Chemical mapping of a 207-nucleotide RNA with DMS and 2A3.

RNA sequence: GGGAACGACUCGAGUAGAGUCGAAAAGCUAUGGUGCAACUCUUUAAGGCAAUAACGAACUGAUUCUAAGCAAGUAAUGGAGAAAUGCCAGGGUCACUAUCUAGCCAUAAUAGUGCUUGACAGUAUGAGAAUCUGCUACCCUUCGGGGUAGCAGAAAGUCGUAUUGAUGGUUCGCCAUCAAUACGACAAAAGAAACAACAACAACAAC
Reactivity to DMS in 0.01 (KOAc 150mM, MgCl2 10mM, bicine 150mM(pH8.5), 24C), signal-to-noise 1, nucleotides 027 to 156: g000c040u000a030u010g080g010u030g040c050a040a120c050u000c030u000u000u050a110a130g000g020c010a080a120u000a070a150c060g020a160a130c140u020g000a120u020u020c070u000a060a100g000c050a070a060g030u020a050a080u000g010g020a160g010a060a050a090u000g040c000c000a060g020g040g030u000c030a050c050u000a020u000c080u000a090g030c070c080a120u000a040a040u000a060g020u000g000c030u000u020g000a090c060a060g000u000a080u020g010a100g010a120a080u000c000u000g020c000u000a000c000c000c000u000u000c300g020g020g030g000u000a020g020c000a000g000a000a020a030
Reactivity to 2A3 in 0.01 (KOAc 150mM, MgCl2 10mM, bicine 150mM(pH8.5), 24C), signal-to-noise 2, nucleotides 027 to 156: g020c030u070a000u080g040g100u030g000c050a090a140c020u070c030u060u170u220a100a020g020g000c000a070a080u100a180a080c020g030a030a020c010u000g030a080u150u000c050u200a100a040g020c060a050a050g080u060a030a180u160g070g040a060g070a090a080a010u070g050c010c010a010g010g030g000u050c030a000c010u000a000u060c060u030a040g140c010c000a030u080a210a040u030a050g080u090g020c030u000u120g090a100c030a040g140u120a100u240g070a080g080a040a010u010c000u000g000c000u000a000c000c000c010u000u020c100g030g000g010g000u000a000g030c010a000g000a000a000a000
DMS adducts were read by reverse transcription with MarathonRT.
Source: RMDB library M2RFPK, as collected in RNAgym.
The reactions ran in a buffer of 150 mM KOAc, 10 mM MgCl2 and 150 mM bicine (pH 8.5), at 24 C.